[RMDB]
RNA sequence: GGGAACGACUCGAGUAGAGUCGAAAAGGAGAUCGAAGAUGACCGACGUCAGCACGGUCGGGAUGUAGGUCCGCAUGCAUCCCAGUUGACGAAACUUGACGAUUUCCAAAGCGGACAAGAAGUCAAAAGGUCAUACUACGUUCGCGUAGUAUGACCUAAAAGAAACAACAACAACAAC
Reactivity to DMS in 0.01 (KOAc 150mM, MgCl2 10mM, bicine 150mM(pH8.5), 24C), signal-to-noise 1, nucleotides 027 to 126: g000g010a100g060a020u000c000g000a080a150g000a140u040g000a030c120c000g000a080c080g000u000c100a100g150c180a160c010g000g020u000c150g000g000g000a070u000g000u000a180g020g000u000c020c000g040c000a070u000g040c010a000u040c000c000c080a140g000u000u000g000a210c070g000a080a050a060c060u030u030g000a270c000g000a000u000u000u000c040c040a020a170a000g000c000g000g000a060c000a150a140g020a110a000g000u030c020a000a040a290
Reactivity to 2A3 in 0.01 (KOAc 150mM, MgCl2 10mM, bicine 150mM(pH8.5), 24C), signal-to-noise 2, nucleotides 027 to 126: g000g000a040g010a040u040c020g050a030a100g140a170u120g030a000c010c010g090a020c010g120u150c080a030g020c120a020c050g040g090u030c000g000g020g000a000u000g000u010a000g000g010u000c000c000g020c000a000u000g010c000a000u000c020c000c000a000g000u010u020g040a090c120g040a160a010a000c020u030u030g050a000c000g030a050u000u060u000c000c000a040a020a000g010c000g000g000a000c010a040a000g100a010a000g170u210c200a000a050a070
This 177-nucleotide RNA was probed chemically with DMS and 2A3. Source: RMDB library OK1LIB, as collected in RNAgym. 2A3 adducts were read by reverse transcription with SuperScript II with manganese. The RNA was probed in 150 mM KOAc, 10 mM MgCl2 and 150 mM bicine (pH 8.5) at 24 C. Reactivities are given for positions 27 through 126.